The record gives the reactivity of an RNA of 207 nucleotides to 2A3. The RNA was probed in 150 mM KOAc, 10 mM MgCl2 and 150 mM bicine (pH 8.5) at 24 C.

RNA sequence: GGGAACGACUCGAGUAGAGUCGAAAAAUACACCAGCAGUAGGACUCAGCGACCGUCACAACAAGGUUGUGCUGGCAUCCGACGGUCGUAUAGCCCUGUCUUGCAGGUUGCCUUGCACUGACGUGCCACACCAUUUACAGAUUCGUCUGUAAAUGAACGUGAGCAAUUGUUUCGACAAUUGCUCACGAAAAGAAACAACAACAACAAC
Reactivity to 2A3 in 0.01 (KOAc 150mM, MgCl2 10mM, bicine 150mM(pH8.5), 24C), signal-to-noise 1, nucleotides 027 to 156: a000u120a000c020a010c060c030a000g000c000a000g020u140a020g030g000a080c050u050c090a020g010c000g000a000c000c020g030u040c040a020c040a300a060c040a300a090g150g000u020u010g000u030g050c040u090g000g040c010a000u000c010c030g000a010c000g030g000u000c000g000u050a040u020a000g040c000c000c050u040g000u020c040u050u110g000c000a050g050g030u110u180g050c020c000u030u060g000c020a000c100u070g110a050c050g040u050g010c000c090a100c000a020c050c000a000u000u000u000a000c000a000g000a000u000u120c180g080u030c080u000g000u000a000a000a000u000g000a000a000